Structure probing data (DMS and 2A3) for a 177-nucleotide construct. For DMS the reverse transcriptase was MarathonRT. The reactions ran in a buffer of 150 mM KOAc, 10 mM MgCl2 and 150 mM bicine (pH 8.5), at 24 C.
RNA sequence: GGGAACGACUCGAGUAGAGUCGAAAAGGUUGCGUUCGGCCCAGGUGUGGUGGCGUUGGGCAUCAUCGCCGCGGUGACGCUGCUCCAAUUGCUGAUCGCCAAUAGCGACAUGACCGGUGCGUGGGGCGCUCAAGAAUAUCUUCGGAUAUUCUUGAGCAAAAGAAACAACAACAACAAC
Reactivity to DMS in 0.01 (KOAc 150mM, MgCl2 10mM, bicine 150mM(pH8.5), 24C), signal-to-noise 5, nucleotides 027 to 126: g020g010u000u000g020c040g010u000u000c080g020g020c030c070c100a130g010g000u010g020u000g020g020u010g000g000c030g010u010u010g010g010g010c050a040u010c100a070u010c070g020c030c020g020c200g020g010u000g000a050c030g010c050u000g000c020u010c060c050a040a080u010u000g020c030u000g000a100u000c040g020c020c050a060a100u000a120g010c010g000a030c070a090u000g000a080c060c020g000g010u010g000c050g030u000g000g000g010g000c220
Reactivity to 2A3 in 0.01 (KOAc 150mM, MgCl2 10mM, bicine 150mM(pH8.5), 24C), signal-to-noise 4, nucleotides 027 to 126: g070g000u060u050g040c030g020u040u070c040g080g000c030c020c010a060g000g050u090g030u040g050g060u060g020g020c020g020u060u060g050g000g020c030a030u070c030a020u070c050g030c030c020g050c050g040g060u070g010a010c030g000c030u020g000c030u050c030c010a070a080u100u250g020c020u040g030a120u030c020g020c020c020a070a070u160a090g030c010g010a010c020a080u100g040a050c030c040g050g050u060g010c040g020u070g020g010g020g000c060